[RMDB]
RNA sequence: GGGAACGACUCGAGUAGAGUCGAAAAUUCCAUUUGAGUAUCCUGAAAACGGGCUUUUCAGCAUGGAACGUACAUAUUAAAUAGUAGGAGUGAAUAGUGGCCCGUAUAGCAGGCAUUAACAUUCCUGAAAACGUGAAAAGGUUCGCCUUUUCACGAACCAUCCAAUCACCUUCGGGUGAUUGGAUGGAAAAGAAACAACAACAACAAC
Reactivity to 2A3 in 0.01 (KOAc 150mM, MgCl2 10mM, bicine 150mM(pH8.5), 24C), signal-to-noise 1, nucleotides 027 to 156: u030u000c000c000a030u050u010u010g030a010g130u060a030u120c000c000u000g040a020a010a010a020c000g000g000g010c050u050u040u000u000c040a080g080c020a040u010g000g070a000a070c030g100u200a130c050a040u200a070u140u210a190a100a160u230a120g070u010a070g030g000a040g000u000g010a050a100u030a070g000u030g020g070c000c010c000g000u080a040u040a060g000c030a000g000g030c000a000u030u030a040a010c000a030u000u040c010c000u040g020a020a040a020a020c000g000u000g010a000a000a000a040g020g030u010u030c130g190c030c000u000u000u000u000c020a000c000g000a000a000
Notes: Structure probing data (2A3) for a 207-nucleotide construct. Source: RMDB library M2RFPK, as collected in RNAgym.